The record gives the reactivity of an RNA of 177 nucleotides to 2A3 and DMS. The RNA was probed in 150 mM KOAc, 10 mM MgCl2 and 150 mM bicine (pH 8.5) at 24 C. It was measured as part of the RMDB libraries RFM100 and RFMREP.

RNA sequence: GGGAACGACUCGAGUAGAGUCGAAAAUAUCGGCAAUAUUUUUCGCCGAAGUCCGGAAAGGCUCGUCCCCCGCCGAACCGGACAUAAAAGCGGCAGCCUUAUCCCCCUCUCCGGGCUGCCGCACAUAGACAAAUAAUAUGUUCGCAUAUUAUUUGUCAAAAGAAACAACAACAACAAC
Reactivity to 2A3 in 0.01 (KOAc 150mM, MgCl2 10mM, bicine 150mM(pH8.5), 24C), signal-to-noise 9, nucleotides 027 to 126: u140a020u020c010g000g000c020a060a030u040a210u220u220u060u070u130c080g000c000c000g000a030a010g000u000c000c000g010g000a300a280a030g020g000c030u060c090g100u050c010c000c000c010c030g000c000c000g010a030a010c000c000g000g000a000c000a000u070a000a100a020a010g000c000g000g000c000a000g010c000c000u040u080a120u130c010c010c000c000c010u090c020u060c090c030g000g000g000c000u000g000c000c000g000c000a000c000a000u060a000
Reactivity to DMS in 0.01 (KOAc 150mM, MgCl2 10mM, bicine 150mM(pH8.5), 24C), signal-to-noise 7, nucleotides 027 to 126: u030a080u000c000g000g010c020a110a060u030a080u020u010u020u010u010c140g000c010c000g000a030a140g010u010c000c000g000g020a030a090a300g000g000c010u020c140g000u000c010c000c000c200c290g000c000c010g000a140a240c010c000g010g000a010c020a020u030a040a060a140a120g020c000g010g020c000a000g020c000c010u000u010a170u010c020c020c010c100c040u010c060u010c160c120g010g010g000c000u000g000c010c010g010c000a000c090a050u020a110